[RMDB]
RNA sequence: GGGAACGACUCGAGUAGAGUCGAAAAUAGAGCACCAGGAAUCCCGCAUGGAAGCUCCUUCUCUCAGGGUCGAGUCAGCAAGGGGGAGAUGUGGGCAGUGGGCAGUGCUCACAGCAGAACAGCCUGGACAUAGUGGUGAGUUCGCUCACCACUAUGUAAAAGAAACAACAACAACAAC
Reactivity to 2A3 in 0.01 (KOAc 150mM, MgCl2 10mM, bicine 150mM(pH8.5), 24C), signal-to-noise 2, nucleotides 027 to 126: u150a000g050a000g050c050a030c030c020a010g000g080a020a100u060c020c030c020g020c010a050u100g110g070a120a100g070c000u000c000c020u020u000c030u000c000u000c030a040g200g020g080u160c060g020a030g130u090c060a040g000c050a020a070g000g000g000g030g000a050g000a020u050g030u090g000g000g000c030a050g010u040g030g010g000c080a070g120u050g170c000u000c000a010c010a000g070c010a010g050a110a040c020a030g010c000c010u020g020g020
Reactivity to DMS in 0.01 (KOAc 150mM, MgCl2 10mM, bicine 150mM(pH8.5), 24C), signal-to-noise 3, nucleotides 027 to 126: u010a100g020a120g020c110a140c010c010a060g010g020a220a110u000c020c010c010g000c070a080u000g010g010a130a160g000c010u010c010c010u000u000c010u000c020u010c030a120g020g000g030u020c080g000a110g010u000c110a080g000c100a070a050g000g020g000g000g010a050g010a040u000g020u020g000g000g040c070a100g020u010g010g000g010c050a140g010u010g020c010u000c000a020c020a080g010c080a090g010a080a070c110a130g000c020c030u010g000g000